[RMDB]
RNA sequence: GGGAACGACUCGAGUAGAGUCGAAAAAUACUUCUCAGGAUGGCGCGUUGCCGUCCAACAAGAUCCAGGGACUGUACAGAAUUUUCCUAUACCUCGAGUCGGGUUUGGAAUCUAAGGUUGACUCGCUAAAACUUUACGUGGUUCGCCACGUAAAGAACUACAGAAAAUACUUCGGUAUUUUCUGUAGAAAAGAAACAACAACAACAAC
Reactivity to DMS in 0.01 (KOAc 150mM, MgCl2 10mM, bicine 150mM(pH8.5), 24C), signal-to-noise 1, nucleotides 027 to 156: a110u000a060c040u000u000c010u020c010a300g030g010a030u000g000g030c020g010c160g000u020u000g030c000c000g020u030c010c010a050a110c120a140a120g000a070u010c020c060a110g000g000g000a050c090u010g020u010a170c090a090g000a090a110u000u000u020u000c010c010u010a110u040a040c030c000u000c030g020a020g050u000c040g040g000g030u000u010u000g030g000a070a110u010c040u000a070a100g030g010u010u000g010a070c090u000c030g000c100u000a030a090a110a120c010u000u000u000a010c000g000u000g010g020u000u000c300g020c020c000a000c020g000u010a010a000a020g000a060a090
Reactivity to 2A3 in 0.01 (KOAc 150mM, MgCl2 10mM, bicine 150mM(pH8.5), 24C), signal-to-noise 4, nucleotides 027 to 156: a000u110a050c020u020u030c020u010c040a000g000g000a010u000g000g010c040g030c180g240u120u270g010c010c000g020u000c010c010a010a030c050a010a030g060a040u060c030c020a040g050g000g050a020c070u040g050u120a050c060a070g160a270a130u020u010u000u050c000c000u050a030u070a080c000c030u030c060g000a010g010u000c010g000g010g000u010u100u060g020g030a060a050u000c050u100a100a050g100g020u080u140g030a010c000u000c010g000c040u080a070a070a040a060c000u000u000u000a010c020g000u010g000g070u030u050c130g030c040c000a000c000g000u000a000a000a000g000a010a010